[RMDB]
RNA sequence: GGGAACGACUCGAGUAGAGUCGAAAAUCAUCAAUUCUGGGAAUUUCAAAACUAUUGUCUUCAAAUAUUACCUUCUUGGCUGGUAAUUUACCUUCUUGGCUCAUGCCUGUAAUCUCAGCACUUUGGGAGGCUGAGUUGGGCGAAUUACUUGAGACCAACCUCAGCCAUGAUUCGUCAUGGCUGAGGUAAAAGAAACAACAACAACAAC
Reactivity to 2A3 in 0.01 (KOAc 150mM, MgCl2 10mM, bicine 150mM(pH8.5), 24C), signal-to-noise 6, nucleotides 027 to 156: u090c010a010u030c020a020a110u160u090c080u140g020g040g070a050a070u060u130u150c080a110a110a100a090c090u120a100u110u150g050u050c050u120u060c070a070a120a070u150a090u140u070a060c010c010u080u070c020u110u130g070g020c050u010g000g010u010a030a050u030u060u050a050c010c010u070u060c020u070u080g000g000c010u040c040a040u100g010c010c000u040g080u120a090a170u030c010u000c020a020g010c030a080c160u080u130u080g110g060g010a050g080g000c000u000g000a000g000u010u060g020g000g010c030g020a040a060u100u030a090c040u010u070g030a020g050a100c010c000a010
Reactivity to DMS in 0.01 (KOAc 150mM, MgCl2 10mM, bicine 150mM(pH8.5), 24C), signal-to-noise 2, nucleotides 027 to 156: u010c030a050u010c050a060a120u000u000c030u000g030g010g010a070a100u010u030u000c060a060a060a090a110c050u000a070u010u000g000u000c010u020u020c030a050a080a200u010a110u010u000a060c020c020u000u000c040u000u010g010g020c020u020g000g020u000a020a050u000u000u000a010c040c000u000u000c060u000u000g040g000c020u010c100a120u000g030c010c010u000g030u000a060a100u000c010u010c040a060g030c030a060c070u000u000u000g020g030g010a160g020g000c000u000g010a000g020u000u000g010g010g010c010g000a020a040u000u000a000c050u000u000g010a140g010a120c010c010a070
Chemical mapping of a 207-nucleotide RNA with 2A3 and DMS. The DMS profile rests on 5,325 reads. The reactions ran in a buffer of 150 mM KOAc, 10 mM MgCl2 and 150 mM bicine (pH 8.5), at 24 C. For DMS the reverse transcriptase was MarathonRT.